[RMDB]
RNA sequence: GGGAACGACUCGAGUAGAGUCGAAAAUACGGUGGCGACAAUGCCAAUGGCUUUGACUUCGCUCAAGCGGGAUUGCAGACUGGAUCGUCGUUUAAGGUGUUUGCUCUGGUGGCCGCCCUUGAGCAGGAGUACUCCAUUACUUCGGUAAUGGAGUACUAAAAGAAACAACAACAACAAC
Reactivity to 2A3 in 0.01 (KOAc 150mM, MgCl2 10mM, bicine 150mM(pH8.5), 24C), signal-to-noise 5, nucleotides 027 to 126: u180a020c060g060g020u050g010g030c020g050a150c110a090a060u180g020c020c000a010a070u130g040g030c020u080u050u060g030a080c030u060u040c050g000c010u040c030a030a030g030c050g000g040g040a110u050u150g040c030a010g020a090c020u050g020g030a050u070c030g050u020c030g020u050u060u130a090a050g080g000u060g060u060u130u060g020c030u020c030u030g100g000u060g060g010c000c010g040c000c000c000u030u080g030a010g000c020a030g010g080
Reactivity to DMS in 0.01 (KOAc 150mM, MgCl2 10mM, bicine 150mM(pH8.5), 24C), signal-to-noise 4, nucleotides 027 to 126: u030a040c110g000g010u030g010g010c030g030a100c120a070a060u010g010c010c030a080a080u020g010g010c050u010u000u000g000a080c070u000u010c060g010c030u010c060a040a070g000c090g000g010g000a090u010u020g000c060a110g020a060c040u010g020g000a020u000c040g010u000c050g020u010u020u020a100a090g020g010u010g010u000u010u010g000c030u000c030u030g000g010u020g000g000c040c060g010c040c040c040u000u020g000a060g000c030a080g010g030

The data come from the RNA Mapping Database (RMDB), library OK1LIB. This 177-nucleotide RNA was probed chemically with 2A3 and DMS. For DMS the reverse transcriptase was MarathonRT. 2A3 adducts were read by reverse transcription with SuperScript II with manganese. For 2A3, 5,924 sequencing reads were counted. Reactivities are given for positions 27 through 126.